Structure probing data (2A3 and DMS) for a 177-nucleotide construct. The 2A3 profile rests on 673 reads. Reactivities are given for positions 27 through 126. For 2A3 the reverse transcriptase was SuperScript II with manganese. For DMS the reverse transcriptase was MarathonRT.
[RMDB]
RNA sequence: GGGAACGACUCGAGUAGAGUCGAAAAAUCCAGUUGCCUCUGGAUAAUGGCUGAUGCUCGUUGAGGGUUUGUUGCGGUGGCAAGGAACGCCGUGUCAUCUGCAGAGGUGGCUGUUGUGAGGUAACGGUAGCGAUAAAUGCUUCGGCAUUUAUCGCUAAAAAGAAACAACAACAACAAC
Reactivity to 2A3 in 0.01 (KOAc 150mM, MgCl2 10mM, bicine 150mM(pH8.5), 24C), signal-to-noise 2, nucleotides 027 to 126: a000u000c000c000a000g000u020u040g040c000c010u040c010u000g010g120a020u090a090a000u060g000g000c010u100g150a070u230g060c010u050c060g060u100u300g160a180g030g050g010u100u000u120g080u120u010g000c000g030g020u040g000g080c060a160a000g110g000a110a050c030g000c070c000g000u000g000u000c030a000u000c040u060g020c020a000g010a010g060g040u040g030g000c030u030g080u020u000g000u000g040a000g030g070u010a010a010c000g030g050
Reactivity to DMS in 0.01 (KOAc 150mM, MgCl2 10mM, bicine 150mM(pH8.5), 24C), signal-to-noise 1, nucleotides 027 to 126: a070u060c030c040a090g000u000u000g000c020c000u000c000u000g060g000a090u020a020a080u030g000g000c010u010g010a110u010g030c050u000c020g000u000u000g030a280g000g030g010u020u000u000g000u020u000g010c060g000g050u050g000g000c010a080a120g050g030a060a070c210g000c040c010g040u000g000u060c000a030u000c040u000g000c000a070g000a000g000g020u010g030g010c040u000g020u020u020g000u000g000a030g000g000u020a000a030c020g000g030